[RMDB]
RNA sequence: GGGAACGACUCGAGUAGAGUCGAAAACGUUGUCAUCGACAACACCCUAUGCAUUCAUGCUCUGUAAGGAUGCGCCGAAAGGAGAGCAAGCCCGAGUUGCCCAGACCUGAAAUGCAACACUUUAGAGAAAACCCGAAGCAGUUCGCUGCUUCGGGAAGGAAGUCAAAAACUUCGGUUUUUGACUUCCAAAAGAAACAACAACAACAAC
Reactivity to 2A3 in 0.01 (KOAc 150mM, MgCl2 10mM, bicine 150mM(pH8.5), 24C), signal-to-noise 1, nucleotides 027 to 156: c190g000u000u000g030u010c150a290u130c300g010a010c000a010a000c010a070c000c010c000u060a100u040g010c010a010u000u000c010a030u120g000c030u020c020u040g040u050a060a030g000g040a040u000g000c010g040c010c000g080a100a050a020g020g020a030g030a060g050c030a040a050g010c060c020c010g080a080g060u020u120g040c020c010c000a000g010a010c000c020u000g000a100a130a010u040g030c010a110a000c010a030c120u140u190u160a110g020a000g040a060a070a010a000c000c000c000g010a010a000g000c000a000g000u040u110c170g070c100u010g000c000u000u000c000g000g000g000a000a000